[RMDB]
RNA sequence: GGGAACGACUCGAGUAGAGUCGAAAAUCCCCAUUAGACGUUCUGAGAACACGUGCACCAGCUUCCAAGCUUUCUCCCUCCCGAACCGCCCUGAUUAGUGUGUGAAGAACUGGCACAUCUCCACGAGGCAAUCAGACUCGUUCGCGAGUCUGAUUGCAAAAGAAACAACAACAACAAC
Reactivity to DMS in 0.01 (KOAc 150mM, MgCl2 10mM, bicine 150mM(pH8.5), 24C), signal-to-noise 1, nucleotides 027 to 126: u000c000c000c000c300a170u040u000a100g040a150c030g000u000u000c040u000g020a150g000a030a160c110a050c010g000u020g000c000a080c050c030a080g040c010u000u000c110c040a110a210g000c060u000u030u000c060u000c130c000c000u020c000c000c000g030a140a050c110c180g040c110c020c000u070g000a090u000u050a020g010u000g000u040g030u000g000a200a090g000a060a060c030u030g000g000c110a020c110a050u020c000u000c000c000a090c110g000a140g050
Reactivity to 2A3 in 0.01 (KOAc 150mM, MgCl2 10mM, bicine 150mM(pH8.5), 24C), signal-to-noise 2, nucleotides 027 to 126: u000c040c000c000c000a040u120u190a020g050a080c020g050u100u040c040u080g060a010g020a050a000c090a000c030g020u080g060c050a080c050c010a010g020c010u060u000c000c040a120a080g010c040u020u030u020c010u010c000c030c000u040c030c030c000g030a040a060c010c040g010c000c000c000u010g000a010u000u050a070g050u010g000u000g020u020g090a040a110g030a040a060c020u050g020g000c020a000c000a020u030c020u000c060c000a040c070g010a030g040
This 177-nucleotide RNA was probed chemically with DMS and 2A3. Source: RMDB library RFM100, as collected in RNAgym. For DMS the reverse transcriptase was MarathonRT. Values cover nucleotides 27 to 126. The DMS profile rests on 1,049 reads. The RNA was probed in 150 mM KOAc, 10 mM MgCl2 and 150 mM bicine (pH 8.5) at 24 C.